[RMDB]
RNA sequence: GGGAACGACUCGAGUAGAGUCGAAAACGCGAGCCUAUCGAGUUUGGAGUCAUCCGGGCCGAAGGGUUGAGACGCACCCACAGACGGGAGCCUCCAGGAGGGUUUGAGGAGAACUCACCUCCAGAGGAAGGCCUCACGUUCGCGUGAGGCAAAAGAAACAACAACAACAAC
Reactivity to DMS in 0.01 (KOAc 150mM, MgCl2 10mM, bicine 150mM(pH8.5), 24C), signal-to-noise 4, nucleotides 027 to 129: c110g030c080g010a010g020c010c010u040a170u030c070g010a150g000u000u000u000g040g010a050g010u000c200a090u020c010c040g000g000g000c010c000g030a100a300g000g000g000u030u020g020a060g000a070c100g060c040a100c010c000c010a070c150a110g020a050c060g000g000g000a060g000c000c000u010c000c070a120g000g000a020g000g000g000u040u040u090g020a030g000g000a260g060a170a180c020u030c000a010c030c000u040c010c000a150g000a100g000g000a080a030g050
Reactivity to 2A3 in 0.01 (KOAc 150mM, MgCl2 10mM, bicine 150mM(pH8.5), 24C), signal-to-noise 5, nucleotides 027 to 129: c030g000c020g020a000g000c000c020u080a160u080c030g020a050g120u010u070u050g090g030a000g060u160c060a120u000c060c000g010g030g000c010c010g010a070a080g030g000g000u010u030g040a010g000a030c020g010c020a080c000c020c000a020c020a010g070a010c030g000g010g010a010g010c000c000u000c000c000a050g000g000a010g040g050g040u050u140u300g010a020g020g050a160g070a100a070c010u000c000a020c000c000u000c000c010a040g010a010g040g010a000a000g030